[RMDB]
RNA sequence: GGGAACGACUCGAGUAGAGUCGAAAAGACGUAAUCCGCGCAAAUCCACAAACGCCAACGAUGAGCGUUUCGCUGUAGCCGCUUAAGGCAACCGCCGGGGCCGCCUGAGCCCUGUUACCAAAGACGGGAAACUCGAUGCCAUUCGUGGCAUCGAGAAUUCCCGUACCCUAUUCGUAGGGUACGGGAAAAAAGAAACAACAACAACAAC
Reactivity to DMS in 0.01 (KOAc 150mM, MgCl2 10mM, bicine 150mM(pH8.5), 24C), signal-to-noise 1, nucleotides 027 to 156: g000a090c080g030u000a060a040u000c020c070g000c040g010c030a020a120a100u000c050c040a100c040a030a230a070c060g010c000c020a080a210c050g010a180u000g000a080g010c040g000u000u010u000c050g170c090u010g040u000a170g010c020c010g000c080u000u030a080a240g000g000c000a070a050c050c020g050c090c020g020g000g000g080c090c040g020c030c090u000g010a140g010c000c020c000u010g010u000u010a160c040c030a020a040a120g040a040c010g020g010g000a060a040a180c010u000c000g000a010u000g010c000c040a050u000u000c300g010u030g000g020c000a020u000c000g020a000g050a000a050
Reactivity to 2A3 in 0.01 (KOAc 150mM, MgCl2 10mM, bicine 150mM(pH8.5), 24C), signal-to-noise 1, nucleotides 027 to 156: g040a000c030g050u090a060a050u050c040c020g030c000g020c040a080a030a060u120c070c040a120c070a150a120a030c070g000c000c030a120a040c160g160a200u100g050a070g030c000g040u000u070u040c030g000c070u030g030u100a030g020c010c030g050c170u230u200a130a080g010g000c020a020a020c010c000g040c010c010g030g010g020g020c020c010g020c020c030u050g020a040g020c000c010c000u020g030u000u090a040c000c020a020a070a010g100a040c030g030g000g000a010a040a030c000u000c000g000a000u000g000c000c000a010u040u000c200g090u050g000g020c000a000u000c000g000a000g000a000a000
The record gives the reactivity of an RNA of 207 nucleotides to DMS and 2A3. The reactions ran in a buffer of 150 mM KOAc, 10 mM MgCl2 and 150 mM bicine (pH 8.5), at 24 C. It was measured as part of the RMDB library M2RFPK.